The record gives the reactivity of an RNA of 307 nucleotides to DMS and 2A3. For 2A3 the reverse transcriptase was SuperScript II with manganese. For 2A3, 2,317 sequencing reads were counted. High 2A3 reactivity points to a flexible backbone, as in loops and unpaired stretches. The DMS profile rests on 5,736 reads. Reactivities are given for positions 27 through 266.
RNA sequence: GGGAACGACUCGAGUAGAGUCGAAAAACAAUCAUGGCAGAAGGGGAAGCAAACAUGUCCUUCACAUGGUGGCAGCAAGAAGUGCGGAGUGAAGCGGGGGCAAAGCCCCUUAUAAAACCAUCAGAUCUUGUGAGAACUCACUAUCAUGAGAACAGCAUGGAGGUAAUUAUCCAGUUGAUAUUUAUCUUGUUCCAGUCACCUUAAGAAAGCUGUUUGGCAAGGGCAGUGACUGGAAGCUGGGAGAGAGGGUCAACAGCUGAAUCUCAAGUAUGCUGUUCGCAGCAUACAAAAGAAACAACAACAACAAC
Reactivity to DMS in 0.01 (KOAc 150mM, MgCl2 10mM, bicine 150mM(pH8.5), 24C), signal-to-noise 3, nucleotides 027 to 266: a090c070a110a090u030c030a030u030g010g040c060a070g010a090a100g010g000g020g020a070a110g000c130a090a080a110c120a100u010g000u000c030c060u000u010c080a150c080a030u000g000g010u010g010g030c080a120g010c090a070a100g000a090a030g030u010g020c150g000g030a040g010u000g000a110a060g020c240g000g000g000g000g000c020a090a100a220g010c040c010c010c020u020u010a010u000a090a060a170a140c030c040a020u010c050a110g000a110u000c040u000u000g010u000g010a050g010a060a090c100u030c110a050c020u000a060u020c060a040u000g000a070g000a070a070c060a040g010c040a120u000g010g010a040g010g020u000a060a050u000u020a030u000c010c120a110g010u030u010g000a030u000a010u010u000u000a010u030c010u010u000g010u000u000c020c010a030g000u000c030a020c030c160u000u000a070a140g010a070a110a140g010c010u000g010u000u010u010g010g020c050a070a060g000g010g020c170a100g010u010g010a010c010u020g020g010a020a010g000c050u020g000g020g010a070g000a070g000a050g010g000g020u000c070a030a000c070a040g000c040u000g000a100a090u000c000u010c020a020a250
Reactivity to 2A3 in 0.01 (KOAc 150mM, MgCl2 10mM, bicine 150mM(pH8.5), 24C), signal-to-noise 2, nucleotides 027 to 266: a010c030a030a000u080c040a040u080g030g000c000a060g050a040a000g000g040g020g010a050a000g050c060a110a150a070c040a080u110g050u090c040c030u050u030c040a010c000a050u050g020g010u020g010g060c070a040g010c000a040a020g030a050a000g070u110g070c080g030g020a050g000u010g030a060a000g010c050g010g030g010g010g030c080a050a040a020g050c030c030c010c040u050u020a130u040a040a070a010a030c030c030a030u070c040a010g010a160u020c010u020u080g010u060g030a040g070a170a090c060u040c070a030c050u180a070u220c030a060u100g020a010g010a180a000c010a030g010c030a060u120g020g010a040g020g010u060a100a000u060u060a020u090c040c100a070g070u080u090g030a000u010a090u070u100u000a060u010c000u000u140g050u060u000c000c000a010g000u010c000a000c030c020u080u080a130a000g020a100a020a010g020c030u040g110u130u240u130g150g030c070a000a050g010g010g020c020a040g010u000g030a000c000u010g040g000a010a010g060c020u030g020g040g010a050g000a000g010a000g030g020g020u080c070a050a040c000a050g000c010u000g060a110a040u030c030u010c030a140a000